[RMDB]
An RNA of 177 nucleotides, treated with DMS and 2A3 and read out base by base. For DMS, 3,438 sequencing reads were counted. For DMS the reverse transcriptase was MarathonRT. It was measured as part of the RMDB library OK2TRN. Reactivities are given for positions 27 through 126. 2A3 adducts were read by reverse transcription with SuperScript II with manganese. Conditions: 150 mM KOAc, 10 mM MgCl2 and 150 mM bicine (pH 8.5), 24 C.
RNA sequence: GGGAACGACUCGAGUAGAGUCGAAAACGUGUCUCGCUUCGGCGCGGACGGGAUGAUCGGCGAGACCGACUAUACCGCCCUGGAGGUGGUGAUGUUGGCGGCCCUGUCGAAGGAUCGGAACCUCCUGGCGAUGUAAUAACUUCGGUUAUUACAUCGCAAAAGAAACAACAACAACAAC
Reactivity to DMS in 0.01 (KOAc 150mM, MgCl2 10mM, bicine 150mM(pH8.5), 24C), signal-to-noise 3, nucleotides 027 to 126: c090g010u010g000u000c000u000c030g010c040u000u010c130g020g030c050g030c130g020g010a060c080g020g000g010a110u010g010a090u020c070g010g020c010g010a090g010a100c010c010g000a050c060u000a220u000a070c060c010g010c030c000c060u000g010g010a100g010g010u000g010g010u000g000a060u010g000u000u000g020g020c060g010g000c000c010c030u010g010u010c070g000a110a070g000g010a030u000c010g000g000a140a120c040c030u000c020c010u000g000
Reactivity to 2A3 in 0.01 (KOAc 150mM, MgCl2 10mM, bicine 150mM(pH8.5), 24C), signal-to-noise 2, nucleotides 027 to 126: c030g100u100g040u050c030u010c000g000c030u130u110c120g060g000c050g000c060g090g030a050c040g020g060g000a130u140g020a050u100c020g000g000c040g060a080g050a060c000c000g000a010c000u040a030u060a130c020c010g000c000c030c050u160g210g020a270g030g060u020g000g040u040g010a060u110g000u040u030g030g000c010g040g010c000c030c010u040g020u040c010g030a060a030g060g020a080u060c020g030g000a040a040c010c000u000c000c030u030g050